[RMDB]
The data come from the RNA Mapping Database (RMDB), library M2RFPK.
The record gives the reactivity of an RNA of 207 nucleotides to DMS and 2A3.
For DMS, 1,646 sequencing reads were counted.
DMS (dimethyl sulfate) methylates the pairing face of unpaired adenines and cytosines.
The reactions ran in a buffer of 150 mM KOAc, 10 mM MgCl2 and 150 mM bicine (pH 8.5), at 24 C.
For 2A3 the reverse transcriptase was SuperScript II with manganese.
RNA sequence: GGGAACGACUCGAGUAGAGUCGAAAAUUACUCUUGUUAGGUGAAAGUUGAUGGUCGCCGAGCCAGUCCAUACAUCCAAAAAGGACUCUAUGUAGUAGGAAGUCGAGAGCCUAUGAGAGUUAGAGUCAUGCCUAUUUUGUGUUCGCACAAAAUAGAAGGAAGCUGUAUACUUCGGUAUACAGCUUCCAAAAGAAACAACAACAACAAC
Reactivity to DMS in 0.01 (KOAc 150mM, MgCl2 10mM, bicine 150mM(pH8.5), 24C), signal-to-noise 1, nucleotides 027 to 156: u030u000a140c030u000c010u000u000g000u000u010a110g020g010u000g000a110a060a140g010u010u000g000a070u030g000g020u000c040g060c060c040g020a070g030c010c030a090g000u000c000c010a080u010a100c030a130u010c050c030a010a070a060a120a190g000g000a020c000u000c000u000a030u000g030u000a210g030u010a000g030g030a050a100g010u000c090g020a130g000a210g010c000c030u000a050u010g000a190g000a210g030u000u000a040g000a090g030u000c010a140u000g020c100c010u000a030u000u000u000u020g000u000g030u020u000c300g030c040a050c000a030a010a010a000u000a020g000a130a110
Reactivity to 2A3 in 0.01 (KOAc 150mM, MgCl2 10mM, bicine 150mM(pH8.5), 24C), signal-to-noise 1, nucleotides 027 to 156: u080u050a020c020u010c000u090u130g070u070u070a060g030g000u030g050a170a060a100g040u100u060g070a040u040g010g110u050c060g040c080c030g010a010g020c020c010a020g080u000c020c000a000u050a190c030a090u010c060c010a020a060a020a000a060g040g000a000c000u000c000u010a020u090g050u000a050g020u000a000g000g020a080a040g010u070c120g030a060g020a000g080c000c000u000a000u010g030a050g000a000g090u020u050a010g000a020g000u020c000a040u110g040c010c010u010a010u000u000u000u000g020u000g060u040u040c170g010c060a000c010a010a000a000a000u000a000g000a020a030